[RMDB]
RNA sequence: GGGAACGACUCGAGUAGAGUCGAAAAAUGUAAGUGAUGAUAAUCUACCAGAGGAAGAACAAGCUGUAAAUUACACCGGGGAUAAGGAUGAUGAAGAUUUUGGAAAGCUUUUAGCUAAAGAAAUGGGUGAAGAGGCUGCUGGUCAGGUCCUCAGCGAAUUUUAGUAUGGAUUCGUCCAUACUAAAAUAAAAGAAACAACAACAACAAC
Reactivity to DMS in 0.01 (KOAc 150mM, MgCl2 10mM, bicine 150mM(pH8.5), 24C), signal-to-noise 3, nucleotides 027 to 156: a130u010g000u010a110a080g020u010g010a140u000g000a100u010a080a100u010c030u000a160c020c040a150g020a110g030g010a080a110g000a070a130c050a080a120g010c030u000g020u000a050a060a140u010u010a100c060a080c040c010g030g020g010g010a080u000a040a050g010g020a040u010g000a050u000g010a050a080g010a130u000u000u010u000g000g000a140a120a100g020c020u000u010u000u000a090g020c030u000a030a070a170g010a060a050a040u000g010g010g020u000g000a050a080g020a070g030g040c030u000g010c020u010g020g010u000c090a070g020g010u000c020c010u000c030a090g000c060g020a080
Reactivity to 2A3 in 0.01 (KOAc 150mM, MgCl2 10mM, bicine 150mM(pH8.5), 24C), signal-to-noise 3, nucleotides 027 to 156: a010u080g020u060a040a050g040u000g050a050u030g000a010u030a180a070u110c030u080a080c040c030a020g010a040g050g030a030a030g010a080a030c060a080a050g010c010u020g040u130a080a110a120u090u050a060c040a020c080c070g030g010g000g000a030u060a050a020g020g010a020u020g010a020u050g010a010a040g000a040u060u050u120u140g050g030a110a060a010g000c000u070u100u160u300a060g000c030u110a070a040a040g050a020a090a010u100g010g010g010u030g010a050a020g020a010g030g020c010u030g030c000u040g040g020u030c020a000g000g040u020c000c010u030c030a020g020c030g060a000
The record gives the reactivity of an RNA of 207 nucleotides to DMS and 2A3. Conditions: 150 mM KOAc, 10 mM MgCl2 and 150 mM bicine (pH 8.5), 24 C. Reactivities are rounded to 0.1 and cut off at 0 and 3. High 2A3 reactivity points to a flexible backbone, as in loops and unpaired stretches. Reactivities are given for positions 27 through 156. Source: RMDB library OK3TST, as collected in RNAgym. High DMS reactivity at an A or C suggests that its Watson-Crick edge is free.